Record summary: Chemical mapping of a 177-nucleotide RNA with 2A3 and DMS. DMS adducts were read by reverse transcription with MarathonRT. The reactions ran in a buffer of 150 mM KOAc, 10 mM MgCl2 and 150 mM bicine (pH 8.5), at 24 C. It was measured as part of the RMDB library OK1LIB.
RNA sequence: GGGAACGACUCGAGUAGAGUCGAAAACUCAUCUCCUCUGGCCGGUUUUACCACCCGACCCAAGAUUGGUCCCGAGACACUCCAGAAUUCCAACAAGACAGCAAGUUAGAGAUGGUUAGGGAUGCAGCACAGGUACCGAUUUCGAUCGGUACCUGUGAAAAGAAACAACAACAACAAC
Reactivity to 2A3 in 0.01 (KOAc 150mM, MgCl2 10mM, bicine 150mM(pH8.5), 24C), signal-to-noise 4, nucleotides 027 to 126: c020u030c020a070u040c040u040c030c030u050c030u020g050g000c030c020g080g040u030u020u070u160a080c000c010a040c000c010c020g040a060c010c020c010a100a050g070a100u030u080g040g010u020c010c000c010g010a040g000a030c030a020c010u000c020c010a010g100a080a070u150u020c020c000a060a050c000a100a110g070a080c000a020g060c080a130a040g030u130u120a040g020a000g000a100u060g050g030u030u060a050g030g070g020a040u080g100c050a020g010
Reactivity to DMS in 0.01 (KOAc 150mM, MgCl2 10mM, bicine 150mM(pH8.5), 24C), signal-to-noise 2, nucleotides 027 to 126: c000u020c040a090u010c080u000c020c030u000c040u010g020g000c000c020g000g000u020u010u030u000a080c100c080a030c040c040c010g020a090c040c040c040a060a040g000a160u020u010g020g020u000c020c020c000g000a150g000a060c100a060c040u000c000c040a100g000a120a160u020u010c010c010a080a070c070a050a080g010a120c070a020g020c080a110a060g010u000u020a080g010a140g010a160u000g000g000u000u030a090g000g000g000a000u030g020c070a140g020